[RMDB]
RNA sequence: GGGAACGACUCGAGUAGAGUCGAAAACAUCCUUUUAAUAAGUUUGGCAAAGCUCGUGUCUAUUAUGAGAGCAUGUCUUACCAGGAGCAAGAUGAACUUUUUGCCAUGACAAAGCGUAACGUCAUUCACAUAUCAUGUACUUCGGUACAUGAUAUGUAAAAGAAACAACAACAACAAC
Reactivity to 2A3 in 0.01 (KOAc 150mM, MgCl2 10mM, bicine 150mM(pH8.5), 24C), signal-to-noise 9, nucleotides 027 to 126: c030a050u080c010c000u070u140u080u120a210a170u180a140a030g030u010u030u030g010g010c020a060a050a040g000c020u020c040g090u090g070u040c090u070a180u210u070a090u270g110a050g000a010g040c020a010u050g000u000c000u000u030a050c040c040a060g070g040a080g030c020a020a010g020a060u080g040a070a100c040u030u030u020u040u080g010c010c010a040u050g010a020c020a030a080a030g060c060g080u060a040a020c040g030u010c030a040u090u080c040
Reactivity to DMS in 0.01 (KOAc 150mM, MgCl2 10mM, bicine 150mM(pH8.5), 24C), signal-to-noise 8, nucleotides 027 to 126: c210a120u010c030c000u000u010u000u010a050a140u020a090a110g010u000u000u010g010g000c020a060a140a140g020c020u000c040g010u010g010u010c060u000a120u010u010a080u000g010a110g000a040g010c080a090u010g000u000c020u000u000a070c050c050a150g000g010a120g030c040a030a040g010a060u000g000a080a060c090u000u000u000u000u000g010c040c070a060u000g020a040c040a070a080a080g010c110g010u010a060a080c200g000u000c060a070u010u010c090